[RMDB]
RNA sequence: GGGAACGACUCGAGUAGAGUCGAAAACGAAUUAAAGGCGCAAACGUUGCGUCAAAUACGUGACUCCAAUGCCAAAAGGAUACUCCCUGCGAUAUCCUGUACAGUAUGGCAUACUGUGUGCAGUCAAAUAUGCUGACCUCUUCGGAGGUCAGCAUAUAAAAGAAACAACAACAACAAC
Reactivity to 2A3 in 0.01 (KOAc 150mM, MgCl2 10mM, bicine 150mM(pH8.5), 24C), signal-to-noise 1, nucleotides 027 to 126: c000g000a000a000u030u150a290a040a000g000g000c000g140c170a000a110a260c080g230u300u000g000c030g050u000c000a000a050a000u000a000c000g000u000g000a000c000u090c000c000a000a270u070g000c010c000a010a130a100a000g050g000a000u000a050c270u080c110c070c110u100g130c180g000a000u000a000u000c000c010u000g000u030a040c040a000g040u040a000u040g000g000c000a000u000a000c070u110g060u070g050u030g020c130a120g010u160c000a000a000
Reactivity to DMS in 0.01 (KOAc 150mM, MgCl2 10mM, bicine 150mM(pH8.5), 24C), signal-to-noise 2, nucleotides 027 to 126: c020g000a140a050u000u030a090a250a040g000g010c050g000c000a040a120a270c300g030u010u000g020c000g000u000c000a000a070a000u000a120c020g000u000g010a180c080u000c030c080a040a030u060g000c020c020a030a010a190a000g000g000a010u000a050c110u000c000c000c110u020g000c040g000a160u000a000u000c010c000u000g000u020a070c240a040g010u060a100u050g020g000c010a170u010a070c090u040g000u030g000u050g030c070a030g010u010c090a020a050
This 177-nucleotide RNA was probed chemically with 2A3 and DMS. Conditions: 150 mM KOAc, 10 mM MgCl2 and 150 mM bicine (pH 8.5), 24 C. DMS adducts were read by reverse transcription with MarathonRT. For 2A3, 468 sequencing reads were counted. It was measured as part of the RMDB library OK1LIB.